[RMDB]
RNA sequence: GGGAACGACUCGAGUAGAGUCGAAAAGAUAUGGAGCCCAGACAUGUCUUUGGUUCGGAAACGAACCAUAGACAACAGCUGGCUCCUAAGUCAAACAGGAAAGUGAGCUUCGGCUCACUUUCCUGAACGUAUCUCCCAACUUCGGUUGGGAGAUACGAAAAGAAACAACAACAACAAC
Reactivity to DMS in 0.01 (KOAc 150mM, MgCl2 10mM, bicine 150mM(pH8.5), 24C), signal-to-noise 1, nucleotides 027 to 126: g000a030u000a300u010g000g000a000g020c120c020c010a000g040a110c070a170u000g010u000c000u030u000u000g010g010u010u000c010g010g000a140a020a160c000g000a020a000c000c010a010u010a000g010a010c000a010a050c260a130g010c000u000g000g000c000u000c000c000u010a020a080g000u000c010a100a260a140c000a000g000g000a020a010a020g010u000g000a000g010c000u000u010c180g060g000c010u000c000a040c000u010u000u000c000c000u000g000a020a050
Source: RMDB library TTRDEL, as collected in RNAgym. The record gives the reactivity of an RNA of 177 nucleotides to DMS. DMS adducts were read by reverse transcription with MarathonRT. The RNA was probed in 150 mM KOAc, 10 mM MgCl2 and 150 mM bicine (pH 8.5) at 24 C. For DMS, 829 sequencing reads were counted. Reactivities are rounded to 0.1 and cut off at 0 and 3. Reactivities are given for positions 27 through 126.